Structure probing data (2A3) for a 177-nucleotide construct. The RNA was probed in 150 mM KOAc, 10 mM MgCl2 and 150 mM bicine (pH 8.5) at 24 C.
[RMDB]
RNA sequence: GGGAACGACUCGAGUAGAGUCGAAAAAUAGAUAGAAACAUACUUAACUAUCUAGGUAAAUAUACGGCUGAUAGUACUGGAACUGUAAGCUUAACCAAUCUUCAACCUGGUAAAUAUAUAGCUAUUGGAACGUCACCUCUUUCGAGAGGUGACGUUCAAAAGAAACAACAACAACAAC
Reactivity to 2A3 in 0.01 (KOAc 150mM, MgCl2 10mM, bicine 150mM(pH8.5), 24C), signal-to-noise 1, nucleotides 027 to 126: a000u000a000g000a020u000a020g020a000a210a000c020a000u300a000c120u300u300a000a240c000u000a000u090c000u000a000g070g020u050a000a000a000u260a050u070a050c120g000g000c000u020g070a190u000a000g020u000a140c160u160g000g240a210a000c000u000g120u300a070a070g050c000u000u160a000a000c000c000a000a280u080c000u260u120c010a120a050c000c000u000g000g140u160a070a120a000u080a000u120a020u070a140g070c050u000a070u220u120g080